[RMDB]
RNA sequence: GGGAACGACUCGAGUAGAGUCGAAAAGUGACUGAGAAACAGUCGCCACGAUCGACGAUCCACGGGAGACACUAGCAUGGUGCCGGAAGUAAGACGAUAACGGUGAUCUCGUGUAAGUGUUAGGACGACAAUCAUUCAUUUUCGAAUGAAUGAUUGUAAAAGAAACAACAACAACAAC
Reactivity to DMS in 0.01 (KOAc 150mM, MgCl2 10mM, bicine 150mM(pH8.5), 24C), signal-to-noise 9, nucleotides 027 to 126: g030u020g010a020c010u000g010a190g020a150a130a160c040a010g000u010c010g010c010c040a070c130g000a070u010c030g000a070c050g010a100u000c030c010a070c050g000g000g010a090g010a090c030a030c030u000a130g000c080a040u010g000g020u010g000c010c010g000g000a090a130g010u010a090a080g010a180c110g000a070u010a070a170c050g000g000u000g000a170u010c020u010c020g020u010g010u000a070a070g010u010g010u000u000a060g000g000a230c220g000
Reactivity to 2A3 in 0.01 (KOAc 150mM, MgCl2 10mM, bicine 150mM(pH8.5), 24C), signal-to-noise 7, nucleotides 027 to 126: g020u010g000a000c000u000g010a020g100a150a120a000c000a000g000u000c000g000c000c010a060c020g030a060u010c010g040a020c020g010a060u000c000c010a020c020g020g010g020a050g010a000c000a000c010u020a020g020c000a030u020g010g000u030g010c000c000g010g020a040a010g060u110a060a030g110a040c070g020a040u040a070a010c000g000g000u020g030a060u000c070u020c010g000u010g000u020a060a020g000u000g010u030u040a020g020g000a010c010g010
Chemical mapping of a 177-nucleotide RNA with DMS and 2A3. Reactivities are given for positions 27 through 126. The 2A3 profile rests on 19,905 reads.